About this RNA:
The record gives the reactivity of an RNA of 177 nucleotides to 2A3 and DMS. High 2A3 reactivity points to a flexible backbone, as in loops and unpaired stretches. It was measured as part of the RMDB library OK2TRN. For DMS the reverse transcriptase was MarathonRT. Reactivities are rounded to 0.1 and cut off at 0 and 3.

RNA sequence: GGGAACGACUCGAGUAGAGUCGAAAAGUUUGAGCGAUGGGGGGACGCAGAAGGAUAGGGUAAGCGCGCUGUUGGAUAUGCGCGUCCAAGCAGUUAGGCCGGAAACGAGGAAAAUCCCGUUUCCAUCCAACUGUGAAAAGUUCGCUUUUCACAGUUGAAAAGAAACAACAACAACAAC
Reactivity to 2A3 in 0.01 (KOAc 150mM, MgCl2 10mM, bicine 150mM(pH8.5), 24C), signal-to-noise 4, nucleotides 027 to 126: g040u040u080u150g070a060g010c060g030a120u130g000g010g000g000g000g020a010c030g000c030a010g020a090a040g060g020a030u110a080g090g000g020u070a090a020g020c010g000c010g000c030u060g030u180u080g060g030a050u030a040u200g050c050g000c010g000u000c010c000a010a010g000c010a020g020u070u160a060g060g020c030c010g000g000a000a020a000c010g000a260g010g030a080a160a020a250u130c000c000c020g000u010u010u000c000c000a000u020c000
Reactivity to DMS in 0.01 (KOAc 150mM, MgCl2 10mM, bicine 150mM(pH8.5), 24C), signal-to-noise 7, nucleotides 027 to 126: g010u000u000u000g010a080g010c060g010a090u010g010g000g010g010g000g020a080c100g010c080a070g010a080a070g010g000a090u000a090g000g000g000u000a080a160g000c040g010c040g010c010u000g010u000u000g020g010a100u010a080u010g000c050g020c030g010u000c040c040a060a080g010c050a040g010u010u010a100g010g010c090c110g000g000a010a020a030c020g010a080g010g000a100a060a110a190u010c000c010c000g010u000u000u000c000c010a080u010c100